[RMDB]
RNA sequence: GGGAACGACUCGAGUAGAGUCGAAAAGGGGGUGGCCUGGAGCGUCGGGCCCCAGCAGUCCGUGGAAUUCACCCUCUUACCGCUUCUCCACACUCCUUCCCCCCUGCGGGCUCCCCCCAUAAGAUGAUACGGUUUAUCUUCGGAUAAACCAAAAGAAACAACAACAACAAC
Reactivity to DMS in 0.01 (KOAc 150mM, MgCl2 10mM, bicine 150mM(pH8.5), 24C), signal-to-noise 9, nucleotides 027 to 129: g000g030g030g000g080u000g030g000c100c050u020g020g010a070g010c140g060u050c100g000g000g080c060c040c010c030a070g030c150a120g000u030c030c050g000u030g020g040a110a080u060u050c060a070c000c000c000u030c050u010u030a150c110c070g040c080u000u030c030u010c010c040a080c110a150c070u020c000c030u010u010c010c030c010c010c020c020u020g000c040g050g000g000c000u000c020c010c010c020c000c020a060u010a030a030g040a150u080g000a090u050a110c160
Reactivity to 2A3 in 0.01 (KOAc 150mM, MgCl2 10mM, bicine 150mM(pH8.5), 24C), signal-to-noise 9, nucleotides 027 to 129: g000g000g000g000g000u020g010g010c010c020u020g030g010a060g030c040g090u140c060g040g030g000c000c010c010c000a000g040c020a010g050u010c000c020g060u100g020g020a050a080u150u090c020a030c000c000c000u020c000u010u080a110c020c020g020c060u060u010c030u020c010c000a040c010a040c050u030c010c000u010u080c020c000c000c000c000c000u030g010c030g020g000g000c000u010c000c000c000c000c000c000a060u110a080a060g100a070u210g020a020u080a140c080